[RMDB]
RNA sequence: GGGAACGACUCGAGUAGAGUCGAAAAGACUAGUUAUGAUGAAUUGUGCAACUGAAAAUUAUGCAUCAGAAGUAGCAAGACUCAAACAAACAUUGAAUUCCAGGAACGUUAUACAUGGCUUAGCAGGAGGUAUUAAGGAGCUAUCGAUACCAAUAUAUCCUUAGGGAGAUUUCGAUCUCCCUAAGGAAAAAGAAACAACAACAACAAC
Reactivity to 2A3 in 0.01 (KOAc 150mM, MgCl2 10mM, bicine 150mM(pH8.5), 24C), signal-to-noise 1, nucleotides 027 to 156: g070a020c110u070a010g070u100u030a030u120g030a030u080g000a000a120u010u090g010u030g030c030a020a020c040u050g000a040a010a010a010u210u130a110u100g050c010a010u000c010a010g030a090a010g000u060a020g010c020a020a010g010a010c030u010c020a020a040a140c000a000a080a000c000a040u030u030g050a050a030u160u000c010c000a000g040g000a050a000c030g020u010u010a050u000a030c070a000u050g010g030c000u010u170a010g000c000a000g000g020a010g020g000u010a010u000u000a070a020g000g000a000g000c000u000a030u060c020g040a050u000a030c000c020a030a000u000a000u120a010
Reactivity to DMS in 0.01 (KOAc 150mM, MgCl2 10mM, bicine 150mM(pH8.5), 24C), signal-to-noise 2, nucleotides 027 to 156: g040a130c030u000a050g000u000u010a080u000g010a150u000g010a080a100u000u000g030u010g000c070a100a300c100u010g000a120a090a070a210u000u000a060u010g000c050a080u000c060a060g000a060a070g000u000a060g010c040a040a140g000a120c030u010c050a070a080a090c060a160a070a030c070a100u000u000g000a100a190u010u000c020c030a080g010g020a050a080c050g010u000u000a070u000a080c050a050u000g010g000c020u000u000a060g010c030a060g000g000a030g010g040u010a060u000u000a050a120g000g030a040g040c030u000a080u000c030g000a110u000a080c030c010a050a120u010a140u000a140
Chemical mapping of a 207-nucleotide RNA with 2A3 and DMS. For DMS, 3,215 sequencing reads were counted. The reactions ran in a buffer of 150 mM KOAc, 10 mM MgCl2 and 150 mM bicine (pH 8.5), at 24 C. Values cover nucleotides 27 to 156.